Background: This 207-nucleotide RNA was probed chemically with 2A3. Source: RMDB library OK3TST, as collected in RNAgym.
RNA sequence: GGGAACGACUCGAGUAGAGUCGAAAAGUAUUAAGGAUGCCACAGCUGGAAGCACUACCUCCAUCACCAAUGCUGCUGCCAUAUUAAAGGAAUUCUCCUCUGACCCUGUGUCUUUACAUCAUUUGUUCAAGAGUCAAUAUCCUGAGUGGAAGCAGCCGUCUUCGAGAUCAUUCGUGAUCUCGAAGACAAAAGAAACAACAACAACAAC
Reactivity to 2A3 in 0.01 (KOAc 150mM, MgCl2 10mM, bicine 150mM(pH8.5), 24C), signal-to-noise 2, nucleotides 027 to 156: g040u070a060u170u200a200a020g040g020a010u040g050c070c080a080c160a050g000c070u100g010g030a060a000g120c020a020c050u080a080c030c030u020c020c010a120u130c110a070c070c020a040a010u200g000c010u000g010c000u010g030c000c000a050u110a050u040u280a190a110a000g000g000a020a020u040u040c000u020c000c000u010c010u000g020a020c020c020c010u030g040u000g020u000c010u080u230u100a080c090a090u090c010a030u060u060u110g060u020u040c050a100a020g000a000g060u040c010a050a000u050a150u110c010c010u020g000a020g040u010g020g000a020a000g000c010a000g000c020c000